[RMDB]
RNA sequence: GGGAACGACUCGAGUAGAGUCGAAAAGUCAAGGUGUAACCUAUGGGUUGGGAAGAAAUGGGCUACAUUUUCUAAGCUAAGAAUAUCCCCUAUAUCCACACGAAAGUUUUUAUGAAACUUAAAAACUUACGUUCGUAAUCUUCGGAUUACGAACGUAAAAAGAAACAACAACAACAAC
Reactivity to 2A3 in 0.01 (KOAc 150mM, MgCl2 10mM, bicine 150mM(pH8.5), 24C), signal-to-noise 2, nucleotides 027 to 126: g080u070c010a000a080g030g040u080g020u050a170a110c000c000u000a090u090g300g020g000u040u080g000g000g060a080a100g040a050a130a040u020g000g000g000c010u010a010c030a010u000u040u050u140c040u080a000a050g040c000u000a160a000g040a170a130u180a140u230c060c040c000c000u010a030u000a050u180c100c000a090c000a000c000g050a070a000a060g000u000u000u000u000u000a160u180g040a140a000a160c110u000u020a100a010a000a000a000c040u040